[RMDB]
RNA sequence: GGGAACGACUCGAGUAGAGUCGAAAAUGUCUGGAAGCGAAUAGCAACCCACAGGGAGGCUUUAGUCACACCGGGCUCCCGCAAGGGACUCACCCAGGAGACCGGCCGUUGGACGGUAGUGGGAGAGCUCUGAACAGAGCUUCGGCUCUGUUCAGAGAAAAGAAACAACAACAACAAC
Reactivity to DMS in 0.01 (KOAc 150mM, MgCl2 10mM, bicine 150mM(pH8.5), 24C), signal-to-noise 1, nucleotides 027 to 126: u020g000u010c010u000g000g000a190a100g010c050g000a050a110u010a060g020c060a120a140c000c000c030a100c190a140g010g000g050a100g010g010c010u000u010u010a090g010u000c010a100c190a070c000c000g000g010g050c060u010c010c000c010g000c260a120a100g000g020g000a110c120u000c140a090c010c010c010a090g000g010a130g010a020c010c160g020g000c020c020g000u030u000g000g030a050c020g000g000u020a060g010u010g010g000g020a160g000a110g030